[RMDB]
RNA sequence: GGGAACGACUCGAGUAGAGUCGAAAAUGUCAAAAAGAGUUGCCUGGAGAUAAUAUAAUUGUAAAAAUUUGCAAUGCUGCAUUGAAGACGCAAAUUGCAGUUUCAAAAAAGGCAGAGCAGAUAGAGACAUACUCAGGACUUUCGAGUCCUGAGUAUGAAAAGAAACAACAACAACAAC
Reactivity to DMS in 0.01 (KOAc 150mM, MgCl2 10mM, bicine 150mM(pH8.5), 24C), signal-to-noise 1, nucleotides 027 to 126: u000g000u020c120a010a080a110a090a060g010a150g030u010u020g010c050c010u000g000g010a120g000a100u010a090a070u000a130u000a080a090u000u000g000u010a030a060a120a060a030u010u000u010g000c030a050a110u010g040c100u000g010c120a080u000u000g030a040a080g020a090c160g050c010a060a120a070u000u000g040c010a020g000u000u000u000c060a070a010a050a060a100a160g000g000c010a000g000a300g000c010a060g010a050u010a080g000a170g000a180

Chemical mapping of a 177-nucleotide RNA with DMS. Conditions: 150 mM KOAc, 10 mM MgCl2 and 150 mM bicine (pH 8.5), 24 C. For DMS, 618 sequencing reads were counted.